[RMDB]
Record summary
This 177-nucleotide RNA was probed chemically with 2A3. The RNA was probed in 150 mM KOAc, 10 mM MgCl2 and 150 mM bicine (pH 8.5) at 24 C. The data come from the RNA Mapping Database (RMDB), library OK1LIB. For 2A3, 1,641 sequencing reads were counted.

RNA sequence: GGGAACGACUCGAGUAGAGUCGAAAACAAAACUGACCAUCUAUGAGGUCAUACAUCGUCAUAGAAAAACAAAACAAAACUGACCAGUUAUGAGGUCAUACAUCGUCAUAGCAAACAAAACAACAAACCACUACUCGGAGUUCGCUCCGAGUAGUGGAAAAGAAACAACAACAACAAC
Reactivity to 2A3 in 0.01 (KOAc 150mM, MgCl2 10mM, bicine 150mM(pH8.5), 24C), signal-to-noise 2, nucleotides 027 to 126: c020a000a070a000a120c200u100g000a000c020c000a020u000c000u030a020u010g000a000g000g000u000c010a020u220a020c110a090u130c200g080u010c000a020u000a000g020a030a050a000a000a000c070a000a050a060a000c060a020a130a030a010c120u050g030a000c000c000a000g000u010u000a000u010g000a000g020g000u020c030a000u130a030c010a080u210c130g150u000c040a000u000a000g000c000a000a000a100c050a090a070a000a010c090a100a010c010a030a010a130